[RMDB]
RNA sequence: GGGAACGACUCGAGUAGAGUCGAAAAUCAACGAUGCGGGACAACUUGCGUUGCAGCAACUCGAUGAAGUUGGGCAUCCACUCCGCGCCCGACCGGGUCAGGGCCGGUUCUACCGCCGGCGCCAGCACUGUUAAAGGCUGUUCGCAGCCUUUAACAGAAAAGAAACAACAACAACAAC
Reactivity to 2A3 in 0.01 (KOAc 150mM, MgCl2 10mM, bicine 150mM(pH8.5), 24C), signal-to-noise 1, nucleotides 027 to 126: u080c010a000a050c020g090a040u160g010c020g010g050g050a040c020a130a030c080u050u160g000c040g060u040u050g010c020a040g100c010a020a040c010u010c060g150a160u190g140a100a050g000u030u030g020g010g000c000a000u000c020c010a040c070u120c050c010g060c000g000c020c000c000g040a040c030c050g040g000g000u010c080a070g010g010g000c000c000g030g000u100u000c060u120a060c010c000g000c010c000g010g010c060g050c030c010a000g000c020a020
Reactivity to DMS in 0.01 (KOAc 150mM, MgCl2 10mM, bicine 150mM(pH8.5), 24C), signal-to-noise 3, nucleotides 027 to 126: u010c080a070a110c060g010a040u000g020c040g010g010g010a150c060a050a070c080u000u000g020c150g030u010u010g010c050a140g010c030a030a060c050u010c040g010a140u010g000a070a030g000u000u000g020g000g020c020a060u000c030c080a140c130u000c070c060g000c150g000c020c000c010g000a050c070c050g010g010g000u000c100a100g000g010g020c010c000g000g000u000u000c060u010a090c180c080g000c000c000g000g000c000g010c030c000a090g020c100a220

The record gives the reactivity of an RNA of 177 nucleotides to 2A3 and DMS. DMS adducts were read by reverse transcription with MarathonRT. 2A3 is a SHAPE reagent: it acylates the 2'-hydroxyl of flexible nucleotides of all four kinds. It was measured as part of the RMDB library OK2TST.